Background: Structure probing data (2A3 and DMS) for a 177-nucleotide construct. The RNA was probed in 150 mM KOAc, 10 mM MgCl2 and 150 mM bicine (pH 8.5) at 24 C. It was measured as part of the RMDB library RFM100. DMS adducts were read by reverse transcription with MarathonRT.
RNA sequence: GGGAACGACUCGAGUAGAGUCGAAAACUGGAGUGGUGGGGGGCGUGCGUGAAAUUGCCGCCCUUUGGAUCACUUUUCUGUGCGGGGCUUUUCUCAACAAAACAGUCCAGUGGGGUAUGGCUUUGCAGCUAUGACGAAAGUUCGCUUUCGUCAUAGCAAAAGAAACAACAACAACAAC
Reactivity to 2A3 in 0.01 (KOAc 150mM, MgCl2 10mM, bicine 150mM(pH8.5), 24C), signal-to-noise 2, nucleotides 027 to 126: c050u030g000g010a020g030u030g010g070u070g000g010g000g010g000g040c000g040u140g030c030g000u120g150a180a070a170u190u300g030c000c000g000c000c000c000u010u000u010g050g010a000u010c010a040c000u070u010u030u000c050u020g070u070g010c040g000g020g000g010c010u080u020u070u000c010u010c020a040a050c010a010a090a030a020c020a020g050u050c110c000a020g000u040g010g000g010g000u060a020u110g040g000c000u000u000u070g060c040a080
Reactivity to DMS in 0.01 (KOAc 150mM, MgCl2 10mM, bicine 150mM(pH8.5), 24C), signal-to-noise 2, nucleotides 027 to 126: c110u030g000g000a060g020u000g010g060u000g000g000g000g000g030g050c010g020u030g000c000g000u040g020a000a060a120u100u040g010c020c040g010c010c000c020u000u000u000g010g030a070u040c050a060c030u020u000u030u030c110u010g010u030g020c100g050g000g010g040c090u020u010u000u010c010u000c060a120a080c260a060a030a110a070c230a030g000u020c020c000a000g010u080g000g000g010g010u000a080u050g010g010c000u020u000u000g000c110a090